[RMDB]
RNA sequence: GGGAACGACUCGAGUAGAGUCGAAAACAACACGCAGUUUGCAUACGCUGCUUAAUUAAUUAAGUAGCCGUUCCAGCCACUGAGCCUGCGCGGUGGUGAGUGAACGUCAUUUUGCAGGAUAGGCCAAGAGCUUCGGUCCGGAGCUGGCGGCUGAGACGGAACUCAUAUAGUUCGCUAUAUGAGUUCCAAAAGAAACAACAACAACAAC
Reactivity to DMS in 0.01 (KOAc 150mM, MgCl2 10mM, bicine 150mM(pH8.5), 24C), signal-to-noise 2, nucleotides 027 to 156: c000a070a040c070a090c050g010c070a090g020u010u010u010g020c050a150u040a110c160g020c020u020g030c000u020u000a050a080u000u000a110a180u000u000a000a040g030u000a010g020c040c040g010u000u010c020c020a280g000c010c020a050c030u030g000a080g040c020c000u000g000c010g040c030g000g030u000g010g020u000g000a140g060u020g040a090a110c090g030u000c140a130u000u010u000u010g060c030a000g000g010a040u000a160g020g030c010c000a080a300g000a080g000c010u010u000c020g000g010u010c060c070g000g000a040g020c010u010g000g000c300g010g010c000u000g020a210g020a100c120
Reactivity to 2A3 in 0.01 (KOAc 150mM, MgCl2 10mM, bicine 150mM(pH8.5), 24C), signal-to-noise 5, nucleotides 027 to 156: c040a010a030c040a030c140g040c030a060g040u070u140u130g120c060a120u110a100c070g000c010u010g010c030u060u080a080a040u140u080a050a100u030u030a020a020g020u010a010g010c010c000g000u010u000c010c020a020g010c000c000a000c000u000g000a000g010c020c000u010g020c020g000c010g040g000u000g000g020u040g030a060g010u300g010a010a010c010g020u030c100a090u090u190u130u130g000c010a000g010g010a030u020a000g010g000c000c000a010a000g020a000g040c000u010u010c030g120g220u070c150c210g000g000a000g000c000u000g000g000c000g000g000c000u000g000a000g020a010c120
Overview: Conditions: 150 mM KOAc, 10 mM MgCl2 and 150 mM bicine (pH 8.5), 24 C. This 207-nucleotide RNA was probed chemically with DMS and 2A3. 2A3 adducts were read by reverse transcription with SuperScript II with manganese. The 2A3 profile rests on 4,376 reads. High DMS reactivity at an A or C suggests that its Watson-Crick edge is free. The DMS profile rests on 2,004 reads. High 2A3 reactivity points to a flexible backbone, as in loops and unpaired stretches.